[RMDB]
RNA sequence: GGGAACGACUCGAGUAGAGUCGAAAAGUUGGAGCGUUCGCGCUCCAACAAAUAAGGGAAGUCGAGUGCACCCAGCACACUCUAAAUAAGACAAAACGACAAAAAUCUCAUCCUUCGGGAUGAGAAACGUUACUGAUUGGUUCGCCAAUCAGUAACGAAAAGAAACAACAACAACAAC
Reactivity to DMS in 0.01 (KOAc 150mM, MgCl2 10mM, bicine 150mM(pH8.5), 24C), signal-to-noise 1, nucleotides 027 to 126: g000u020u030g000g010a010g050c000g000u000u030c240g000c030g020c000u000c000c000a010a000c000a010a070a090u000a090a070g030g000g000a150a060g020u000c060g020a110g020u000g000c010a070c020c020c000a210g000c000a080c000a180c030u000c000u000a010a080a100u000a110a100g010a110c090a020a010a080a120c010g000a090c080a120a040a030a060a130u000c000u010c000a000u000c000c000u000u000c240g050g010g020a020u000g000a000g000a000a040a080
Reactivity to 2A3 in 0.01 (KOAc 150mM, MgCl2 10mM, bicine 150mM(pH8.5), 24C), signal-to-noise 1, nucleotides 027 to 126: g000u000u000g000g000a010g000c030g020u120u100c180g010c000g030c080u000c000c000a000a000c000a000a010a000u060a020a010g010g030g000a160a000g050u010c020g020a000g000u010g000c020a030c000c010c000a010g000c000a000c000a000c010u000c000u050a240a120a060u230a060a040g070a060c020a010a080a030a040c070g040a010c020a100a060a040a060a100u000c000u000c010a000u000c010c000u030u040c190g120g000g000a000u000g010a010g010a010a000a000